Annotation
An RNA of 177 nucleotides, treated with 2A3 and DMS and read out base by base. Reactivities are given for positions 27 through 126. The DMS profile rests on 5,739 reads. DMS adducts were read by reverse transcription with MarathonRT.

RNA sequence: GGGAACGACUCGAGUAGAGUCGAAAACUAAGGGUCUUCGGACCCUUAGAAAUAACGGUGGGCUCAUGACGCUAGUCGAUCAUGCUGCUCGACCUAGACUAAAAAGGCUCAGGUUCGCCUGAGCCAACUAUUACUGAGACUUCGGUCUCAGUAAUAGAAAAGAAACAACAACAACAAC
Reactivity to 2A3 in 0.01 (KOAc 150mM, MgCl2 10mM, bicine 150mM(pH8.5), 24C), signal-to-noise 3, nucleotides 027 to 126: c000u010a000a000g020g020g000u000c010u020u070c190g040g010a010c010c000c000u000u010a000g010a000a010a000u160a060a010c030g000g010u000g020g010g000c020u000c020a010u000g020a010c000g010c040u050a080g140u300c010g060a240u010c000a000u010g060c090u030g010c010u030c010g000a000c000c010u000a020g080a080c070u110a060a050a030a050a070g020g000c000u010c000a000g050g040u060u100c170g060c040c020u000g000a000g000c010c000a000a000
Reactivity to DMS in 0.01 (KOAc 150mM, MgCl2 10mM, bicine 150mM(pH8.5), 24C), signal-to-noise 5, nucleotides 027 to 126: c000u010a000a010g010g010g020u000c000u000u020c170g050g000a010c000c000c000u000u000a000g000a050a080a070u000a070a110c230g010g010u000g010g000g000c010u000c000a020u000g000a010c010g000c040u010a100g010u010c000g000a090u000c010a000u000g010c180u000g020c010u000c000g020a010c010c010u000a100g010a200c110u000a030a080a070a120a100g000g010c000u000c010a010g010g010u000u010c220g000c000c000u000g010a000g010c010c000a010a010